An RNA of 207 nucleotides, treated with 2A3 and DMS and read out base by base. High DMS reactivity at an A or C suggests that its Watson-Crick edge is free. For DMS the reverse transcriptase was MarathonRT. For 2A3, 1,371 sequencing reads were counted. For 2A3 the reverse transcriptase was SuperScript II with manganese.
RNA sequence: GGGAACGACUCGAGUAGAGUCGAAAACUCCCCUCAAAAUCGUUUCAGUCCUAAAUUGAUUCGGCGGCCCUGUCAUGAGGCCGAAACGAAGGCACGUACCCCUUCGAAUGGCGUCGGGGAGUCAGCGAAAGCACUGACCCUUUCGAGGGUCAGUGAACUCUAGGAAUACCUUCGGGUAUUCCUAGAGAAAAGAAACAACAACAACAAC
Reactivity to 2A3 in 0.01 (KOAc 150mM, MgCl2 10mM, bicine 150mM(pH8.5), 24C), signal-to-noise 3, nucleotides 027 to 156: c010u010c000c010c010c020u080c040a180a170a170a180u070c020g040u050u070u010c080a110g090u130c020c050u190a150a160a150u130u070g040a060u060u040c010g020g000c010g000g000c060c000c000u070g030u060c030a060u070g030a020g010g010c010c000g030a010a010a000c000g010a000a010g020g040c100a010c160g130u200a120c000c000c000c030u000u000c020g020a030a030u040g010g000c030g020u060c050g020g000g000g020a030g020u010c020a020g070c020g080a080a030a000g100c000a000c000u010g000a000c000c000c000u010u080u130c190g060a020g000g000g000u000c000a000g000u000g000a010a010
Reactivity to DMS in 0.01 (KOAc 150mM, MgCl2 10mM, bicine 150mM(pH8.5), 24C), signal-to-noise 1, nucleotides 027 to 156: c020u000c000c000c000c060u020c010a050a030a120a060u000c010g020u000u020u020c020a050g020u000c060c050u000a070a120a080u000u000g000a100u030u010c070g020g030c030g010g020c020c010c030u000g000u020c210a130u000g000a050g000g000c010c010g000a010a040a090c040g000a030a080g050g020c000a100c080g000u000a180c050c030c000c010u000u000c030g060a050a150u000g010g000c030g000u000c100g000g010g010g010a040g020u000c010a090g000c040g040a080a100a180g000c000a000c010u000g020a030c010c010c000u000u030u000c170g010a030g010g010g020u010c010a010g030u020g000a040a060